Chemical mapping of a 177-nucleotide RNA with DMS and 2A3. The RNA was probed in 150 mM KOAc, 10 mM MgCl2 and 150 mM bicine (pH 8.5) at 24 C. For DMS the reverse transcriptase was MarathonRT. For DMS, 695 sequencing reads were counted. As a SHAPE reagent, 2A3 marks flexible, mostly unpaired nucleotides at the ribose 2'-OH. For 2A3, 833 sequencing reads were counted.
RNA sequence: GGGAACGACUCGAGUAGAGUCGAAAAGAGUCACACUUCGGUGUGACUCAAAUAAGCUGACCAGCUAUGAGGUGUACAUCGUCAUGCACAAAUAGAAUAAAAAAACCCUAAUCUUCGGAUUAGGGAAGUAGUAUACACGCUUCGGCGUGUAUACUACAAAAGAAACAACAACAACAAC
Reactivity to DMS in 0.01 (KOAc 150mM, MgCl2 10mM, bicine 150mM(pH8.5), 24C), signal-to-noise 1, nucleotides 027 to 126: g010a000g000u000c000a000c000a000c010u000u000c260g010g000u000g030u010g000a030c000u000c000a000a060a060u000a150a010g030c070u000g000a300c040c020a140g000c000u040a120u000g000a170g000g020u000g000u010a070c040a100u000c150g000u000c050a110u000g000c030a000c000a040a220a050u000a060g000a070a080u040a020a000a100a100a040a170a030c000c000c000u000a000a000u000c000u000u020c210g010g000a010u000u030a020g000g000g000a000a000
Reactivity to 2A3 in 0.01 (KOAc 150mM, MgCl2 10mM, bicine 150mM(pH8.5), 24C), signal-to-noise 1, nucleotides 027 to 126: g000a000g010u030c000a000c000a000c000u050u170c250g030g010u000g000u000g030a000c010u010c000a010a010a000u000a000a000g050c070u010g070a060c040c000a000g000c030u030a030u040g020a060g050g200u070g000u020a050c030a150u180c080g060u050c040a030u060g000c000a000c000a020a030a020u120a050g160a070a100u250a200a100a000a000a040a020a050c040c000c010u010a000a000u000c010u050u080c300g160g000a000u010u000a020g000g120g010a030a000